Annotation: Chemical mapping of a 177-nucleotide RNA with DMS and 2A3. Values cover nucleotides 27 to 126. For DMS, 1,671 sequencing reads were counted. The RNA was probed in 150 mM KOAc, 10 mM MgCl2 and 150 mM bicine (pH 8.5) at 24 C. Reactivities are rounded to 0.1 and cut off at 0 and 3. DMS adducts were read by reverse transcription with MarathonRT. For 2A3 the reverse transcriptase was SuperScript II with manganese.

RNA sequence: GGGAACGACUCGAGUAGAGUCGAAAAAGCACCUUGUUCAGUCUGCAAUAGCCGAUAGAAAAUCUCGCGCUUGAUGAGAGGCGCAAGAAUGUUGAUGUUGGCGGGUUCAUCAAGUAAGGCGACUAGACAGUAUCGUAUGCUUCGGCAUACGAUACUGAAAAGAAACAACAACAACAAC
Reactivity to DMS in 0.01 (KOAc 150mM, MgCl2 10mM, bicine 150mM(pH8.5), 24C), signal-to-noise 2, nucleotides 027 to 126: a100g030c120a100c050c020u010u000g000u000u000c060a100g010u010c020u010g020c050a060a040u000a170g040c040c020g000a080u030a090g020a150a030a100a090u000c030u000c020g010c030g000c000u000u000g000a100u010g000a100g010a090g030g010c000g030c030a080a020g000a040a080u010g010u020u000g000a110u010g000u010u000g000g030c040g000g030g030u000u010c020a040u010c030a040a060g010u000a090a060g020g010c000g010a100c050u000a070g010a250
Reactivity to 2A3 in 0.01 (KOAc 150mM, MgCl2 10mM, bicine 150mM(pH8.5), 24C), signal-to-noise 1, nucleotides 027 to 126: a000g060c040a020c040c000u050u020g090u140u070c110a070g050u030c010u140g040c070a030a060u040a130g010c050c000g000a050u000a070g180a040a110a010a030u070c000u000c010g020c010g000c030u020u050g020a060u060g060a160g040a020g160g000c020g000c000a010a000g010a020a050u150g030u110u040g040a060u050g020u150u000g040g000c000g040g050g050u000u060c010a060u040c010a060a040g050u080a100a000g020g110c060g020a020c000u020a040g010a060